[RMDB]
RNA sequence: GGGAACGACUCGAGUAGAGUCGAAAAGAAAGAAAGAAAGUACUCUGUAAAGUGAGGGAUUGCCUGGACCAGGUCGGCGGGCCUGCUCCAGUUUCCUUCGCUCUGCUCAACGGGCAGACCGCCACAAAAAACGCGUGGCUGUUCGCAGCCACGCGAACUUUACGUAAAGGUUCGCCUUUACGUAAAGAAAAGAAACAACAACAACAAC
Reactivity to 2A3 in 0.01 (KOAc 150mM, MgCl2 10mM, bicine 150mM(pH8.5), 24C), signal-to-noise 2, nucleotides 027 to 156: g020a010a050a020g050a030a050a010g030a060a090a000g030u050a070c030u060c080u160g090u210a100a070a040g020u030g020a020g010g040g000a070u060u170g060c030c000u010g000g000a000c030c000a010g000g010u040c020g020g030c040g030g020g000c030c000u010g020c000u010c000c010a000g010u010u050u010c000c000u020u030c040g000c020u030c000u020g020c000u000c050a100a130c100g000g000g000c000a010g030a060c010c010g000c020c000a040c070a040a140a010a020a030a010c020g000c000g000u000g000g040c000u000g020u040u090c180g000c050a000g020c050c010a000c010g040c000g000a000a000
Background:
The record gives the reactivity of an RNA of 207 nucleotides to 2A3. For 2A3, 1,603 sequencing reads were counted. Conditions: 150 mM KOAc, 10 mM MgCl2 and 150 mM bicine (pH 8.5), 24 C. It was measured as part of the RMDB library M2RFPK.